[RMDB]
RNA sequence: GGGAACGACUCGAGUAGAGUCGAAAAGAAGAUCAGGCAAAGCGACGCCACGACGGCGAUCAUGACGUCAUACAGGGUGCCCUCGUGGAUGUCUUUGUAGGUGGAUGAGGUGCCCGCCAGAUAGAUGUGAGAAGGGGAUGUUCGCAUCCCCUUCUCAAAAAGAAACAACAACAACAAC
Reactivity to 2A3 in 0.01 (KOAc 150mM, MgCl2 10mM, bicine 150mM(pH8.5), 24C), signal-to-noise 2, nucleotides 027 to 126: g170a060a000g000a000u050c110a060g130g100c040a020a000a040g000c060g110a040c170g000c020c000a000c000g060a000c030g010g000c050g070a020u030c010a010u070g060a070c110g120u120c030a030u120a190c030a000g070g000g060u070g020c000c000c000u000c070g000u010g000g000a080u070g170u040c030u000u000u030g040u000a060g060g070u070g000g110a140u050g050a030g040g060u030g000c060c000c040g000c020c010a010g000a100u080a080g100a000u180g090
Reactivity to DMS in 0.01 (KOAc 150mM, MgCl2 10mM, bicine 150mM(pH8.5), 24C), signal-to-noise 2, nucleotides 027 to 126: g000a150a110g010a060u000c020a080g000g040c030a000a030a080g010c120g020a080c090g000c010c010a000c000g000a050c300g000g000c000g080a040u010c010a090u000g020a100c140g000u010c300a090u070a140c060a000g070g000g030u010g000c000c010c000u020c040g000u020g000g000a010u010g010u030c000u000u000u000g010u000a010g000g000u010g000g000a160u000g000a080g000g010u010g010c010c010c000g020c050c020a090g000a130u040a030g000a110u010g000
Record summary:
Structure probing data (2A3 and DMS) for a 177-nucleotide construct. The 2A3 profile rests on 1,031 reads. The data come from the RNA Mapping Database (RMDB), library OK1LIB.